[RMDB]
RNA sequence: GGGAACGACUCGAGUAGAGUCGAAAAGAUAUGGAAUAGAGCUAGCUCCCCAUAGCACAACAAAGCCUAUCGGAAACGAUAGGCUUUGUUAGCUAUGGAGCGAGCUUGGACCUCUAUUCCUAAGUCACUAAUGUUCAAGGUUCGCCUUGAACAUUAGAAAAGAAACAACAACAACAAC
Reactivity to DMS in 0.01 (KOAc 150mM, MgCl2 10mM, bicine 150mM(pH8.5), 24C), signal-to-noise 3, nucleotides 027 to 126: g010a050u000a300u020g010g000a050a010u000a020g020a040g000c020u000a020g020c000u000c020c020c010c000a000u000a000g000c000a070c190a030a010c000a000a010a000g010c000c000u010a000u010c010g000g000a150a120a270c010g000a010u000a010g000g010c000u000u000u000g000u010u000a110g020c010u010a010u000g000g000a040g050c190g010a010g000c010u000u000g010g000a130c300c010u000c000u000a000u000u010c010c000u000a020a120g010u000c060a190
Structure probing data (DMS) for a 177-nucleotide construct. Conditions: 150 mM KOAc, 10 mM MgCl2 and 150 mM bicine (pH 8.5), 24 C. DMS adducts were read by reverse transcription with MarathonRT. It was measured as part of the RMDB library TTRINS.